This 177-nucleotide RNA was probed chemically with DMS and 2A3.
[RMDB]
RNA sequence: GGGAACGACUCGAGUAGAGUCGAAAAACCUCAGUCUUCGGACUGAGGUGAGCGGAGCUUGGUGGCCGUGGGAACUCCUCCUUGGUGACAAGGGCCCACGGGGUGCGGCACGCUUCGGCGUGCCGAAUUGAUAAUUGUGUUUCGACACAAUUAUCAAAAAAGAAACAACAACAACAAC
Reactivity to DMS in 0.01 (KOAc 150mM, MgCl2 10mM, bicine 150mM(pH8.5), 24C), signal-to-noise 5, nucleotides 027 to 126: a020c000c000u000c000a000g010u000c000u000u020c210g020g000a010c000u000g010a000g000g010u000g010a030g020c100g000g000a080g010c090u000u010g020g020u000g010g000c010c010g020u000g010g000g000a090a060c050u000c050c040u000c000c000u000u000g010g010u020g000a220c030a010a000g000g000g010c010c000c000a010c010g000g000g000g020u010g010c010g000g000c000a010c000g010c000u000u010c120g020g010c000g030u000g000c000c000g010a000a010
Reactivity to 2A3 in 0.01 (KOAc 150mM, MgCl2 10mM, bicine 150mM(pH8.5), 24C), signal-to-noise 2, nucleotides 027 to 126: a010c000c000u000c000a000g000u000c010u030u160c230g140g000a010c010u000g000a000g000g000u010g000a020g010c070g050g030a020g020c070u110u120g170g020u100g130g150c020c010g000u000g000g000g010a070a060c060u040c040c000u010c020c000u040u030g000g020u070g040a040c000a010a000g010g000g020c000c010c000a010c000g010g010g010g030u120g050c020g000g040c000a000c010g000c020u020u020c170g070g010c000g000u000g000c010c010g000a010a030
Record summary
The reactions ran in a buffer of 150 mM KOAc, 10 mM MgCl2 and 150 mM bicine (pH 8.5), at 24 C. As a SHAPE reagent, 2A3 marks flexible, mostly unpaired nucleotides at the ribose 2'-OH.